[RMDB]
This 207-nucleotide RNA was probed chemically with 2A3.
RNA sequence: GGGAACGACUCGAGUAGAGUCGAAAAAGUGACAAGUGAUAAUUAACAUGUGUAGCUCACAGUGGGAAUCAGGGGAUCUCAGCUGGGCCUGCUUGCACGUCUGUGGUCAGCUAUAGAUCAUCUCAGCAGCUCUGCGAUGAUAAUCGGGCAUGCUCACCUCGAAAAAGUCUUUCGAGACUUUUUCGAGAAAAGAAACAACAACAACAAC
Reactivity to 2A3 in 0.01 (KOAc 150mM, MgCl2 10mM, bicine 150mM(pH8.5), 24C), signal-to-noise 1, nucleotides 027 to 156: a010g070u040g090a050c010a020a090g010u040g060a060u090a300a140u230u110a160a010c050a110u130g020u050g060u100a040g010c050u060c160a050c050a050g000u000g040g060g010a010a070u180c100a120g020g010g010g050a050u010c030u010c060a060g010c020u040g010g040g050c000c020u050g000c000u010u070g010c040a020c030g000u060c090u060g050u040g010g010u030c020a010g000c040u060a050u180a100g020a040u020c020a010u000c040u010c000a050g010c010a020g010c070u040c000u160g030c040g010a020u090g030a010u040a020a000u130c050g010g000g030c010a010u020g000c020u000c010a050c000